RNA sequence: GGGAACGACUCGAGUAGAGUCGAAAAUCUUGCUCCUCUUCAGUUCAGCCCCGGAGCAUCUCCAAAUGUUUCAAUGACCAUGACUGUUACUCCUGUCGGAGCUGUCUUUAACGGGCUUAGACAUCCAUGACUUACGUACAUUCGUGUACGUAAGUCAAAAAGAAACAACAACAACAAC
Reactivity to DMS in 0.01 (KOAc 150mM, MgCl2 10mM, bicine 150mM(pH8.5), 24C), signal-to-noise 3, nucleotides 027 to 126: u000c040u000u000g010c030u000c010c010u010c090u000u010c090a110g000u010u010c050a110g010c070c020c040c110g020g000a060g020c050a030u000c040u000c030c070a100a120a050u010g010u000u000u000c070a100a140u000g010a080c090c080a110u010g000a040c050u000g020u000u010a060c050u000c030c030u000g000u000c100g020g030a050g020c060u000g010u010c020u000u010u010a080a090c180g030g010g000c030u000u000a050g010a040c050a100u020c060c070a140
Reactivity to 2A3 in 0.01 (KOAc 150mM, MgCl2 10mM, bicine 150mM(pH8.5), 24C), signal-to-noise 1, nucleotides 027 to 126: u000c010u000u030g000c020u020c030c030u080c010u110u070c030a120g070u080u060c000a020g040c000c000c000c000g040g010a000g000c080a040u040c050u040c020c020a000a060a140u080g030u000u150u050c080a130a130u160g060a050c000c060a030u070g020a020c030u050g040u150u050a080c010u000c040c000u080g050u130c050g000g020a050g040c020u010g060u000c000u000u010u020a060a010c080g040g030g000c000u040u050a000g010a030c000a050u050c050c030a100